[RMDB]
The record gives the reactivity of an RNA of 177 nucleotides to 2A3 and DMS.
The reactions ran in a buffer of 150 mM KOAc, 10 mM MgCl2 and 150 mM bicine (pH 8.5), at 24 C.
For DMS the reverse transcriptase was MarathonRT.
The data come from the RNA Mapping Database (RMDB), library OK2TRN.
The 2A3 profile rests on 84,554 reads.
RNA sequence: GGGAACGACUCGAGUAGAGUCGAAAACAAGUCGUUGACCCACAUCGCACUAGGCAGCAAUCCCUUGUACUGCGAUUGCGGUCUGAAGUGGUUCUCCGAUUGGAUAAAGCUGGACUACGUGGAACCGCUAUUAACUAAUGUUCGCAUUAGUUAAUAGAAAAGAAACAACAACAACAAC
Reactivity to 2A3 in 0.01 (KOAc 150mM, MgCl2 10mM, bicine 150mM(pH8.5), 24C), signal-to-noise 9, nucleotides 027 to 126: c030a020a020g070u030c010g040u050u070g140a130c000c040c010a010c020a050u080c040g020c060a040c110u080a020g040g000c010a010g000c010a050a070u060c040c020c000u050u130g180u210a180c120u080g030c040g050a030u010u060g010c020g010g010u000c020u030g030a100a020g020u020g030g000u030u020c020u000c020c020g130a160u050u160g040g010a070u120a140a140a020g030c060u070g040g020a060c030u050a030c100g040u070g040g030a040a040c020c010g000
Reactivity to DMS in 0.01 (KOAc 150mM, MgCl2 10mM, bicine 150mM(pH8.5), 24C), signal-to-noise 9, nucleotides 027 to 126: c070a110a050g010u000c020g020u000u000g010a100c050c000c010a100c150a070u000c070g020c100a080c150u010a040g010g010c040a040g010c060a050a050u000c060c040c070u000u010g010u010a090c190u010g010c220g000a030u000u000g010c020g010g020u000c030u000g000a070a080g020u000g010g000u000u000c020u000c060c010g010a090u000u000g010g000a100u010a050a080a110g010c040u000g010g000a080c030u000a060c070g010u000g000g000a070a080c050c050g010